[RMDB]
RNA sequence: GGGAACGACUCGAGUAGAGUCGAAAAGAUAUGGAUAUCGCAUUGGACAACAGCUUCGAUCGGAAACGAUCGAAGACAUGUCCGUGCCGAUAUCCUAAGUCAAAAUCACGCUCUUCGGAGCGUGAAACUAUGCCAUUCCGUUCGCGGAAUGGCAUAGAAAAGAAACAACAACAACAAC
Reactivity to 2A3 in 0.01 (KOAc 150mM, MgCl2 10mM, bicine 150mM(pH8.5), 24C), signal-to-noise 2, nucleotides 027 to 126: g030a030u120a030u180g010g000a030u000a000u000c000g000c040a030u130u300g000g010a030c030a200a030c080a270g050c010u000u010c010g010a000u010c010g020g080a070a090a080c040g000a000u000c000g010a000a020g000a000c010a010u060g000u000c020c000g000u010g040c020c030g000a010u010a010u000c000c010u010a140a010g030u010c060a040a010a000a290u020c000a010c000g040c010u020c000u060u100c300g110g010a000g000c000g000u000g000a020a000a000
Reactivity to DMS in 0.01 (KOAc 150mM, MgCl2 10mM, bicine 150mM(pH8.5), 24C), signal-to-noise 2, nucleotides 027 to 126: g010a000u000a300u010g010g020a020u000a000u010c020g010c000a020u000u010g060g000a010c010a030a070c300a200g010c010u000u000c000g000a000u000c010g000g000a120a150a270c010g010a020u000c000g010a000a030g000a010c160a110u020g000u000c000c000g010u000g000c080c120g020a020u000a000u000c000c020u020a020a080g010u020c060a060a060a220a210u000c000a010c020g000c000u000c000u000u020c150g020g010a020g000c000g000u020g000a010a030a190